[RMDB]
RNA sequence: GGGAACGACUCGAGUAGAGUCGAAAAUGGGUGAGGAGCCGGCUGGCCUCUGGGCUCCUUGUGGCUUGAGGUUCAGAUGCUGGCAUCGUUGGUGCUGUAGCCUGGUGGCUGCCAGUACAGAGGAUGCGAUCCUCAUCAAGUUCGCUUGAUGAGGAUCAAAAGAAACAACAACAACAAC
Reactivity to 2A3 in 0.01 (KOAc 150mM, MgCl2 10mM, bicine 150mM(pH8.5), 24C), signal-to-noise 6, nucleotides 027 to 126: u100g040g010g030u090g020a110g030g040a020g020c020c000g040g000c010u020g030g000c010c000u000c030u040g060g010g020c010u080c030c040u040u160g120u140g030g010c020u030u050g010a020g040g000u130u230c050a030g050a140u140g010c020u050g010g000c010a020u050c040g050u000u090g040g000u060g020c020u010g040u060a010g010c010c010u110g110g090u170g040g030c020u040g060c060c030a000g020u000a020c000a010g050a040g060g000a020u070g020c040
Reactivity to DMS in 0.01 (KOAc 150mM, MgCl2 10mM, bicine 150mM(pH8.5), 24C), signal-to-noise 3, nucleotides 027 to 126: u030g000g000g040u000g000a050g000g000a100g000c060c050g000g000c000u000g000g020c010c010u000c000u030g010g000g020c000u010c050c160u070u020g010u050g010g000c050u000u000g000a060g010g000u000u030c060a030g000a090u040g010c010u000g000g000c000a030u010c040g010u000u010g010g000u010g020c020u000g010u010a020g010c040c020u030g010g020u050g020g020c040u010g000c120c030a030g010u020a020c030a150g020a080g000g000a050u000g000c180
This 177-nucleotide RNA was probed chemically with 2A3 and DMS. For 2A3 the reverse transcriptase was SuperScript II with manganese. The reactions ran in a buffer of 150 mM KOAc, 10 mM MgCl2 and 150 mM bicine (pH 8.5), at 24 C. Values cover nucleotides 27 to 126.